This 177-nucleotide RNA was probed chemically with 2A3 and DMS.
DMS adducts were read by reverse transcription with MarathonRT.
The data come from the RNA Mapping Database (RMDB), library TTRINS.
The DMS profile rests on 12,478 reads.
The RNA was probed in 150 mM KOAc, 10 mM MgCl2 and 150 mM bicine (pH 8.5) at 24 C.
RNA sequence: GGGAACGACUCGAGUAGAGUCGAAAAGAUAUGGACCGACCCAGGGAUGACGUACAGCGUUGAAAUGAUAGCAAAUCGGAAACGAUUUGCUAUCAUGGAGCUGUAUGUAAACCUGCGGUCCUAAGUCGUAAGAUAUAUGCUUCGGCAUAUAUCUUACAAAAGAAACAACAACAACAAC
Reactivity to 2A3 in 0.01 (KOAc 150mM, MgCl2 10mM, bicine 150mM(pH8.5), 24C), signal-to-noise 7, nucleotides 027 to 126: g060a030u190a090u260g010g010a000c020c010g060a150c120c100c080a010g060g020g010a130u300g020a020c000g000u010a000c000a000g000c010g170u190u020g000a070a120a010u020g000a000u000a000g010c010a000a010a010u000c000g030g070a090a130a030c000g000a000u010u000u020g000c000u000a000u000c000a000u010g000g000a010g000c010u000g000u010a000u040g000u000a010a010a010c000c000u020g010c030g010g000u000c000c000u050a120a030g200u160c090
Reactivity to DMS in 0.01 (KOAc 150mM, MgCl2 10mM, bicine 150mM(pH8.5), 24C), signal-to-noise 8, nucleotides 027 to 126: g020a140u010a260u010g010g010a020c010c000g000a300c180c290c050a070g000g010g010a070u010g020a180c300g010u000a010c010a000g010c000g020u000u010g000a130a100a010u000g010a010u000a000g000c000a000a000a000u000c000g010g000a100a060a210c000g000a020u000u000u000g000c000u000a000u000c000a000u000g000g020a070g010c000u000g010u010a000u000g020u000a020a300a300c010c000u000g020c030g010g000u000c000c000u010a020a100g000u010c150